[RMDB]
RNA sequence: GGGAACGACUCGAGUAGAGUCGAAAAGCUGUAUACUGCCACUUGUGUGAGAAUACUUUUAGUACAAGCGAGUACACGCAGUAUACUGCCACUUGUGUGAGAAUACUUUUAGUACAAGCGAGUACACAACUAUGUCUGGGUUCGCCCAGACAUAGUUAAAAGAAACAACAACAACAAC
Reactivity to 2A3 in 0.01 (KOAc 150mM, MgCl2 10mM, bicine 150mM(pH8.5), 24C), signal-to-noise 5, nucleotides 027 to 126: g010c020u000g020u010a000u000a000c010u000g010c010c010a060c030u070u050g030u000g030u060g120a140g100a160a060u060a110c000u060u110u170u240a070g020u020a030c010a050a010g020c020g040a010g020u120a050c060a000c100g010c000a000g000u000a000u000a020c000u040g020c000c000a050c010u080u030g030u020g020u030g130a060g060a140a150u130a180c000u070u040u040u060a060g010u020a010c010a040a060g070c030g130a000g050u020a000c060a000c010
Reactivity to DMS in 0.01 (KOAc 150mM, MgCl2 10mM, bicine 150mM(pH8.5), 24C), signal-to-noise 3, nucleotides 027 to 126: g030c040u000g000u010a000u000a010c010u010g000c010c160a070c010u000u000g020u030g000u020g000a090g000a160a130u020a010c020u010u020u050u030a080g020u000a000c040a040a300g020c010g000a140g000u020a020c090a130c300g000c060a000g000u000a000u000a000c020u010g000c020c040a060c100u010u010g010u020g000u010g000a100g000a180a110u020a060c010u010u000u010u030a070g010u000a000c030a070a110g000c170g000a130g000u000a010c040a090c260

The record gives the reactivity of an RNA of 177 nucleotides to 2A3 and DMS. DMS adducts were read by reverse transcription with MarathonRT. Conditions: 150 mM KOAc, 10 mM MgCl2 and 150 mM bicine (pH 8.5), 24 C.